[RMDB]
RNA sequence: GGGAACGACUCGAGUAGAGUCGAAAACAGCAAAAAGGAACCGAUUCCCACCAAGUUCGGAAAUAGAUACCGGGCGAGGCGCUGAAGAAAGAAUCUCGCUUCAGACACCCCAAGGACUCGACUGAAGAAUGCACGCCAUCGUUCGCGAUGGCGUGAAGUAUCUGAAGAUGUUCGCAUCUUCAGAUACAAAAGAAACAACAACAACAAC
Reactivity to 2A3 in 0.01 (KOAc 150mM, MgCl2 10mM, bicine 150mM(pH8.5), 24C), signal-to-noise 2, nucleotides 027 to 156: c010a010g090c040a030a100a070a090a010g080g050a090a010c080c020g080a080u030u020c010c000c020a000c010c040a030a000g010u030u020c010g020g030a070a060a030u110a090g100a050u130a170c030c010g030g010g000c010g010a040g050g000c050g030c060u030g020a060a030g040a040a300a040g040a090a140u050c100u040c140g000c000u020u020c000a030g060a080c020a120c080c020c040c040a010a040g060g000a030c040u060c160g070a060c040u000g010a060a010g060a090a010u170g060c010a020c000g000c000c000a010u020c000g000u020u070c100g020c010g110a000u000g000g000c000g000u000g000a000a000